[RMDB]
Notes:
The data come from the RNA Mapping Database (RMDB), library OK1LIB. An RNA of 177 nucleotides, treated with DMS and 2A3 and read out base by base.
RNA sequence: GGGAACGACUCGAGUAGAGUCGAAAAUAUAAGUAUUGGCCGCAGUUAUCUGCAAACGGUACAGCCCACGGCCACCCGCAUGAGAUAAUCUUGUACUAUUAGUAGACGGUGCUGCCUGCGGCUCAACAGCAUCGUAAGUAUUCGUACUUACGAUGCUAAAAGAAACAACAACAACAAC
Reactivity to DMS in 0.01 (KOAc 150mM, MgCl2 10mM, bicine 150mM(pH8.5), 24C), signal-to-noise 5, nucleotides 027 to 126: u020a080u040a080a080g010u000a100u000u000g000g010c060c020g020c020a020g020u030u010a060u010c020u010g000c110a060a060a120c150g000g010u020a040c080a120g000c050c010c060a160c110g000g000c020c030a070c130c010c040g000c100a070u030g000a070g020a080u020a060a070u020c080u010u000g010u010a030c050u010a100u010u010a140g020u020a050g010a050c090g010g020u000g000c050u010g010c130c010u000g010c020g000g010c030u020c090a050a060c190
Reactivity to 2A3 in 0.01 (KOAc 150mM, MgCl2 10mM, bicine 150mM(pH8.5), 24C), signal-to-noise 7, nucleotides 027 to 126: u240a010u060a010a110g190u080a120u100u110g030g000c010c020g000c010a010g020u100u100a070u110c020u060g060c050a080a030a030c050g000g030u030a030c020a020g040c010c000c010a030c050g020g000c040c000a030c000c000c020g030c060a090u150g030a020g030a110u180a130a060u090c050u070u100g060u060a090c010u050a030u260u060a050g100u030a000g040a080c060g050g010u050g010c030u030g030c000c000u020g000c010g020g000c040u040c050a050a130c070